[RMDB]
RNA sequence: GGGAACGACUCGAGUAGAGUCGAAAACUGUUCUUUUCAGUUUAAUCUCUGAAAGUGUUCUAAGGAACACAACAUUGAUUAAUCUCAUUUUUGGAUCUCGUGGCAAGGCCUCUGUGCUUGCGCAUGCCCCAAUGUAUUUCUUCGGAAAUACAUUGGGAAAAGAAACAACAACAACAAC
Reactivity to 2A3 in 0.01 (KOAc 150mM, MgCl2 10mM, bicine 150mM(pH8.5), 24C), signal-to-noise 6, nucleotides 027 to 126: c010u020g030u120u060c060u140u170u100u070c010a010g000u000u000u030a010a000u010c010u000c000u000g020a110a080a090g050u000g010u020u000c040u080a150a260g180g000a020a000c010a010c000a010a040c000a000u010u020g010a000u020u030a060a060u000c020u010c060a100u080u130u110u160u160g140g010a080u040c050u010c130g030u020g050g000c020a030a040g200g060c020c030u150c140u220g090u200g020c000u010u010g000c140g000c020a020u050g030c000
Reactivity to DMS in 0.01 (KOAc 150mM, MgCl2 10mM, bicine 150mM(pH8.5), 24C), signal-to-noise 4, nucleotides 027 to 126: c020u000g000u000u010c140u010u000u000u000c050a020g000u000u000u000a020a010u000c010u000c020u000g020a040a160a180g010u000g020u010u000c000u000a130a150g030g000a000a000c000a000c000a050a300c010a010u000u000g000a010u000u000a010a070u000c010u020c060a180u000u000u010u010u000g000g000a100u000c060u000c030g060u000g000g000c020a010a050g020g000c020c050u000c160u000g020u010g010c020u000u000g000c030g010c030a020u010g010c240

The record gives the reactivity of an RNA of 177 nucleotides to 2A3 and DMS.
The reactions ran in a buffer of 150 mM KOAc, 10 mM MgCl2 and 150 mM bicine (pH 8.5), at 24 C.
Source: RMDB library RFMREP, as collected in RNAgym.
For 2A3, 6,706 sequencing reads were counted.
DMS adducts were read by reverse transcription with MarathonRT.